[RMDB]
RNA sequence: GGGAACGACUCGAGUAGAGUCGAAAAAUCGCUUGACAAAUACCACUGAUAAAAUCACAUAGUCCUUGCCAUGCAGUUUUAGCAAACUCAACAACAGUGUCCCAGUUUUGAUAGAGCAAAACACCGAUAGCAAUUAAGGCUGCAAUUGCUGCAAUAAGCCUAUCGAUACUUUCGAGUAUCGAUAGGCAAAAGAAACAACAACAACAAC
Reactivity to 2A3 in 0.01 (KOAc 150mM, MgCl2 10mM, bicine 150mM(pH8.5), 24C), signal-to-noise 2, nucleotides 027 to 156: a000u100c110g010c060u050u040g030a060c020a020a160a030u080a050c020c050a020c040u010g080a030u140a150a170a070a080u070c020a030c020a100u100a020g050u050c010c020u040u050g000c000c000a110u120g020c010a030g010u010u030u030u100a040g000c030a050a020a040c030u070c050a010a020c010a000a000c010a060g010u000g030u070c010c010c000a000g000u000u000u040u040g080a100u050a090g040a010g040c030a010a010a010a010c030a020c020c020g110a080u110a040g020c020a010a010u070u040a070a000g090g030c010u040g000c020a010a010u040u030g000c020u030g030c000a000a050u290a110a100